[RMDB]
RNA sequence: GGGAACGACUCGAGUAGAGUCGAAAAAGAGACUAAAUGGCAGUGGGCCAACUUGUUGGCUUAAGAUAUAGUCCGUCCCAGCUGAAAGGCUGUCUGCUAGAGGAAGACCUUUCUAGGUCUGAGAGCUAGUAGAGGGUAGGAGAAGUCUCUCCUACCUGAUUUGACGUUACUUCGGUAACGUCAAAUCAAAAGAAACAACAACAACAAC
Reactivity to 2A3 in 0.01 (KOAc 150mM, MgCl2 10mM, bicine 150mM(pH8.5), 24C), signal-to-noise 3, nucleotides 027 to 156: a000g130a000g010a010c010u020a030a070a150u180g110g050c070a090g080u090g040g010g000c030c010a010a000c050u110u190g050u070u020g060g010c000u040u050a080a020g060a020u090a020u030a140g000u000c010c000g040u010c000c010c000a000g000c000u020g030a070a050a030g050g000c020u020g060u020c010u010g010c000u000a000g000a010g040g040a040a010g010a010c010c000u070u300u110c170u280a020g000g000u000c000u000g010a020g010a020g040c010u000a000g000u020a020g020a030g020g000g000u000a000g020g010a010g000a070a150g190u060c070u010c000u010c130c000u000a000c010c000u000
Reactivity to DMS in 0.01 (KOAc 150mM, MgCl2 10mM, bicine 150mM(pH8.5), 24C), signal-to-noise 2, nucleotides 027 to 156: a120g020a050g020a070c000u010a000a110a180u000g030g000c040a150g030u000g030g020g000c000c000a000a080c030u000u000g000u000u000g010g020c040u010u000a110a150g020a140u030a120u000a020g000u000c010c000g000u000c000c000c010a100g010c010u000g010a150a090a110g010g030c030u000g040u000c000u000g020c010u020a030g010a080g000g020a300a030g000a000c000c030u020u010u010c220u000a010g060g000u000c010u030g000a300g000a100g010c020u000a010g050u010a010g020a100g010g010g020u000a000g000g010a010g000a040a300g010u010c110u000c000u000c000c010u000a010c000c010u000
An RNA of 207 nucleotides, treated with 2A3 and DMS and read out base by base. For DMS, 2,747 sequencing reads were counted. Source: RMDB library ARCHII, as collected in RNAgym. 2A3 adducts were read by reverse transcription with SuperScript II with manganese.